[RMDB]
RNA sequence: GGGAACGACUCGAGUAGAGUCGAAAAUCUUUGCUUACUCACCACAGCUUACACUUGUGUUUCCGGAAGUGAAGAUGAUACUUUUAUUAUACACAUGUUUAGGUUUCAUGUGUACUUGCUAUUUUGGCCUAUUACUAACGUUCGCGUUAGUAAUAGGAAAAGAAACAACAACAACAAC
Reactivity to DMS in 0.01 (KOAc 150mM, MgCl2 10mM, bicine 150mM(pH8.5), 24C), signal-to-noise 9, nucleotides 027 to 126: u000c010u000u000u000g010c010u000u000a060c020u010c050a080c300c010a020c020a020g010c050u010u020a130c300a090c130u000u000g030u000g000u000u000u000c070c110g000g000a020a020g020u000g000a010a020g000a020u000g010a120u010a110c070u000u000u010u010a100u010u010a190u020a020c010a000c010a000u000g000u000u010u010a150g020g010u010u000u000c000a010u000g000u000g010u000a010c210u000u000g010c120u000a130u000u000u000u000g010g010
Reactivity to 2A3 in 0.01 (KOAc 150mM, MgCl2 10mM, bicine 150mM(pH8.5), 24C), signal-to-noise 9, nucleotides 027 to 126: u000c010u020u010u010g000c000u020u040a150c010u020c060a030c020c010a000c010a010g010c010u150u170a040c050a020c070u060u080g010u010g020u050u110u050c050c030g010g010a010a000g000u010g010a000a010g010a010u020g020a020u080a120c020u090u170u080u080a170u230u090a050u050a020c000a000c000a010u010g060u030u070u160a200g080g090u060u110u040c000a000u000g000u000g010u010a050c020u040u080g050c020u070a140u170u100u040u090g120g040
Record summary
Structure probing data (DMS and 2A3) for a 177-nucleotide construct. Reactivities are given for positions 27 through 126. Values are in units of 0.01, from 0 to 300, in steps of 10. It was measured as part of the RMDB library 15KREP. For DMS, 13,786 sequencing reads were counted. For 2A3 the reverse transcriptase was SuperScript II with manganese.